[RMDB]
This 177-nucleotide RNA was probed chemically with DMS and 2A3. For DMS the reverse transcriptase was MarathonRT. Reactivities are given for positions 27 through 126. Conditions: 150 mM KOAc, 10 mM MgCl2 and 150 mM bicine (pH 8.5), 24 C. The data come from the RNA Mapping Database (RMDB), library OK2TRN.
RNA sequence: GGGAACGACUCGAGUAGAGUCGAAAAGUUAUAGCGCACUGUUACGAGUUCCGUGACCUUAAAGUUGCGGCAUUUAAGGGAGAUGACUCUGUUGUGCUUUGUAGCGAUUACCGGCAGAGUCGUAAUGGUGGAUGAAAUAGUUCGCUAUUUCAUCCACAAAAGAAACAACAACAACAAC
Reactivity to DMS in 0.01 (KOAc 150mM, MgCl2 10mM, bicine 150mM(pH8.5), 24C), signal-to-noise 5, nucleotides 027 to 126: g000u000u010a060u000a060g020c120g010c060a040c060u010g010u000u000a060c070g010a140g020u000u000c030c030g010u000g000a140c010c040u000u000a030a050a060g000u010u000g030c060g020g010c070a080u000u000u010a060a040g000g010g010a160g000a090u000g010a030c000u000c010u010g010u000u000g010u010g010c040u000u010u020g020u010a080g030c180g000a110u000u010a100c160c030g000g000c010a030g000a020g010u000c000g020u000a030a080u010g010
Reactivity to 2A3 in 0.01 (KOAc 150mM, MgCl2 10mM, bicine 150mM(pH8.5), 24C), signal-to-noise 4, nucleotides 027 to 126: g050u060u050a080u080a090g070c030g000c020a020c050u030g030u100u090a040c070g030a030g060u070u050c010c010g030u040g080a050c000c030u050u140a060a060a000g020u050u040g060c050g040g010c070a040u030u050u040a030a030g040g020g010a150g000a050u120g000a010c000u000c010u020g020u010u020g080u050g020c000u040u090u120g160u110a020g020c050g080a150u050u230a040c040c000g000g000c000a000g010a010g030u010c020g000u020a010a040u100g100